[RMDB]
RNA sequence: GGGAACGACUCGAGUAGAGUCGAAAAUUAUUUGGUAGCGAGAGGUGACAAUCGAUGACCUACCAAGGAGGACCGGAGGCGAAAGCGAUUACCAAGAACUGAUCUGACGAUCAAGCACGUGAGCAGGCAUACGCCGAUUAUUCGUAAUCGGCGUAUGAAAAGAAACAACAACAACAAC
Reactivity to DMS in 0.01 (KOAc 150mM, MgCl2 10mM, bicine 150mM(pH8.5), 24C), signal-to-noise 7, nucleotides 027 to 126: u010u030a070u030u000u010g000g010u000a020g000c040g000a040g000a050g000g010u020g030a130c180a140a120u010c030g010a060u040g010a060c300c010u000a020c030c020a030a030g000g000a090g020g000a050c020c020g010g010a070g000g020c020g000a060a050a070g000c040g000a040u000u010a080c060c030a070a070g000a080a120c090u010g000a040u000c020u010g020a160c150g000a040u010c060a040a080g000c070a060c050g000u020g010a080g010c090a080g020g000
Reactivity to 2A3 in 0.01 (KOAc 150mM, MgCl2 10mM, bicine 150mM(pH8.5), 24C), signal-to-noise 5, nucleotides 027 to 126: u090u060a030u010u060u010g010g000u020a010g020c000g010a010g000a010g040g030u120g060a070c090a040a080u020c030g130a180u010g000a000c000c000u000a000c000c000a000a000g070g010a020g020g030a020c040c000g020g010a050g020g010c040g070a080a020a030g020c030g010a020u030u060a040c010c010a080a050g020a070a030c020u040g010a040u040c020u080g060a050c100g020a040u050c060a050a000g050c040a020c120g030u040g030a010g030c050a020g050g000